[RMDB]
RNA sequence: GGGAACGACUCGAGUAGAGUCGAAAACAUGGCUGCCGAGAGAGUUGUAGACGAGAGGGUUAGGGAGGUAGCGCUCCUAGCUGAGGUGGUGCUCGGGGCUAGGAGGAGGCUCCCAGAGAAACCGCCGCCACCAUAUCCGAUUCGUCGGAUAUGGUGGAAAAGAAACAACAACAACAAC
Reactivity to 2A3 in 0.01 (KOAc 150mM, MgCl2 10mM, bicine 150mM(pH8.5), 24C), signal-to-noise 3, nucleotides 027 to 126: c050a040u090g000g000c030u040g010c020c050g040a020g020a010g010a010g070u020u110g080u100a040g050a110c070g000a010g030a040g140g060g040u050u070a050g070g020g030a010g020g020u060a030g030c020g000c030u010c000c030u050a040g000c050u090g060a000g020g080u050g010g050u040g020c020u010c030g060g000g000g000c000u050a030g000g040a020g000g000a010g020g070c000u000c040c010c000a030g030a000g040a120a090a000c000c020g040c000c000g010
Reactivity to DMS in 0.01 (KOAc 150mM, MgCl2 10mM, bicine 150mM(pH8.5), 24C), signal-to-noise 2, nucleotides 027 to 126: c110a080u030g010g020c020u010g000c010c010g020a040g010a090g000a090g010u000u000g020u030a140g000a050c050g000a120g000a080g000g000g000u010u030a160g010g020g000a050g030g010u000a110g010c070g000c000u010c000c000u010a000g030c000u010g020a050g000g010u000g010g030u020g010c000u000c030g050g010g000g020c000u000a000g000g000a020g000g010a120g030g000c000u000c000c000c000a100g000a090g030a070a080a060c030c030g050c040c040g000